[RMDB]
RNA sequence: GGGAACGACUCGAGUAGAGUCGAAAAAGCAUGGUCUACGGACCAUGCAACGAAACUUGCGUGGAACAGGCUGUUAGAAUCCAGCCUUUUCAUGUAAAUUUCCAAGUGGACGAUACGUCGUCCACAAUAAUUACACUCAUUUCGAUGAGUGUAAUUAAAAAGAAACAACAACAACAAC
Reactivity to 2A3 in 0.01 (KOAc 150mM, MgCl2 10mM, bicine 150mM(pH8.5), 24C), signal-to-noise 9, nucleotides 027 to 126: a000g000c000a010u010g000g000u010c010u040a090c300g060g000a000c000c000a000u000g000c000a000a010c050g070a020a010a010c040u020u020g000c000g010u010g010g010a030a020c050a130g000g000c000u020g040u100u160a120g140a100a050u080c040c000a000g000c000c000u000u000u000u000c000a000u000g000u010a000a020a050u020u020u000c030c020a140a070g000u000g000g000a000c000g000a010u030a050c240g100u010c000g000u000c010c000a000c000a000a000
Reactivity to DMS in 0.01 (KOAc 150mM, MgCl2 10mM, bicine 150mM(pH8.5), 24C), signal-to-noise 9, nucleotides 027 to 126: a090g010c000a000u000g000g000u000c000u000a120c210g030g000a010c000c000a000u000g010c000a030a030c150g000a030a030a030c130u000u000g000c000g040u000g010g000a000a010c260a010g010g010c000u000g000u000u010a150g020a170a130u030c300c000a000g000c000c000u000u000u000u000c000a010u000g000u000a010a020a080u000u000u000c000c150a070a090g010u000g000g000a010c000g010a040u010a080c150g020u000c000g010u000c000c000a000c010a040a040
An RNA of 177 nucleotides, treated with 2A3 and DMS and read out base by base. Reactivities are rounded to 0.1 and cut off at 0 and 3. For 2A3 the reverse transcriptase was SuperScript II with manganese. Values cover nucleotides 27 to 126. For DMS the reverse transcriptase was MarathonRT. It was measured as part of the RMDB libraries RFM100 and RFMREP.